Structure probing data (DMS and 2A3) for a 177-nucleotide construct.
Conditions: 150 mM KOAc, 10 mM MgCl2 and 150 mM bicine (pH 8.5), 24 C.
The data come from the RNA Mapping Database (RMDB), libraries RFM100 and RFMREP.
For 2A3 the reverse transcriptase was SuperScript II with manganese.
Reactivities are given for positions 27 through 126.

[RMDB]
RNA sequence: GGGAACGACUCGAGUAGAGUCGAAAACAGUCGGGGGCUAAGGCGAGGCCGGAAGGCGUAGUCGAAGCGCAGCAGGCAGACAUUCCUGCACCGCGAUGGAACCGUCACGACCGACGGGGCGACGGAUGAAUCAAUCAGCAUUCGUGCUGAUUGAUUCAAAAGAAACAACAACAACAAC
Reactivity to DMS in 0.01 (KOAc 150mM, MgCl2 10mM, bicine 150mM(pH8.5), 24C), signal-to-noise 5, nucleotides 027 to 126: c150a160g030u020c010g010g030g020g000g040c030u010a080a220g010g000c020g000a080g000g020c000c000g020g090a080a090g000g000c010g020u000a300g000u000c010g000a130a050g010c010g010c100a180g020c000a020g000g020c300a100g000a180c240a150u020u040c020c010u000g020c020a300c070c010g000c010g000a050u010g000g020a060a070c010c000g000u000c010a110c150g000a180c080c040g000a040c040g000g000g000g000c030g000a050c000g000g020a300u010
Reactivity to 2A3 in 0.01 (KOAc 150mM, MgCl2 10mM, bicine 150mM(pH8.5), 24C), signal-to-noise 4, nucleotides 027 to 126: c010a010g090u060c010g030g000g010g020g010c030u010a020a010g000g020c000g000a050g090g000c020c000g070g030a090a020g010g000c000g010u030a010g020u020c020g000a020a000g010c030g010c020a020g000c000a000g060g000c020a030g070a210c040a100u110u050c000c010u020g010c020a040c040c050g100c020g030a020u090g010g140a040a050c030c000g010u020c010a030c120g120a110c010c040g060a080c040g020g000g020g020c010g030a030c020g060g010a030u070